[RMDB]
RNA sequence: GGGAACGACUCGAGUAGAGUCGAAAAGGGUUUGAGCCAUCGCCCGAAUAUGAUGGCUGAUACAAGUCGCCAUUGUACGCGACGUAGUACGUACUCAUUAGUGCGAAAGCACGGUUAGUCCGACUGGGCAGGGACGAUCUUCUGUCAAUACUUAGAAACCAUAUGCUGAGUUCGCUCAGCAUAUGGUAAAAGAAACAACAACAACAAC
Reactivity to DMS in 0.01 (KOAc 150mM, MgCl2 10mM, bicine 150mM(pH8.5), 24C), signal-to-noise 2, nucleotides 027 to 156: g010g030g010u000u000u010g030a060g020c000c060a090u000c020g030c000c000c030g000a090a080u000a030u000g000a030u000g050g000c020u020g050a070u000a040c200a090a140g000u010c010g000c030c020a230u000u000g010u000a120c100g000c010g050a050c030g020u030a030g020u000a060c010g020u010a010c020u000c050a120u010u020a050g030u020g030c000g020a150a080a190g000c000a020c010g020g010u000u000a100g020u000c020c030g020a150c000u000g010g010g030c020a060g000g000g010a050c020g000a120u010c070u000u000c000u000g010u010c000a120a120u020a130c130u000u020a140g000a220a150
Reactivity to 2A3 in 0.01 (KOAc 150mM, MgCl2 10mM, bicine 150mM(pH8.5), 24C), signal-to-noise 4, nucleotides 027 to 156: g060g000g010u050u060u110g050a000g020c000c010a010u010c000g010c000c000c000g050a060a070u200a140u160g000a010u010g000g000c010u000g000a030u040a170c100a130a000g000u000c000g000c030c030a190u100u300g030u130a050c030g000c000g010a000c000g000u000a010g030u000a050c020g010u010a000c020u040c010a020u080u060a110g000u000g000c010g060a080a000a000g010c030a000c000g040g010u060u040a020g000u030c060c030g010a050c040u020g030g050g000c010a000g020g020g020a060c100g110a110u010c040u110u000c020u040g090u030c060a070a050u070a130c080u140u100a050g060a050a170

The record gives the reactivity of an RNA of 207 nucleotides to DMS and 2A3. DMS (dimethyl sulfate) methylates the pairing face of unpaired adenines and cytosines. DMS adducts were read by reverse transcription with MarathonRT.